[RMDB]
RNA sequence: GGGAACGACUCGAGUAGAGUCGAAAAAAUUCCAUCUAGGGCUAAAUAUAAGUGAGAGACCGAUAGCAAACAAGUACCGUGAGGGAAAGAUGAAAAGAACUUUGAAAAUAGAGUUAACAGUACGUGAGUAUGCAAGUCGAUUCGUCGACUUGCAUACAAAAGAAACAACAACAACAAC
Reactivity to DMS in 0.01 (KOAc 150mM, MgCl2 10mM, bicine 150mM(pH8.5), 24C), signal-to-noise 2, nucleotides 027 to 126: a100a070u010u010c000c010a050u040c060u020a140g030g000g000c020u000a040a090a070u040a180u000a110a120g030u000g000a070g000a040g060a090c090c060g000a040u010a030g010c060a000a060a070c080a050a020g010u000a100c040c010g000u020g000a080g020g040g010a050a040a030g000a060u020g000a000a000a050a050g000a050a080c040u000u010u000g000a100a020a040a080u080a020g040a070g020u000u000a040a080c120a030g030u000a030c190g000u010g000a180

This 177-nucleotide RNA was probed chemically with DMS. The reactions ran in a buffer of 150 mM KOAc, 10 mM MgCl2 and 150 mM bicine (pH 8.5), at 24 C.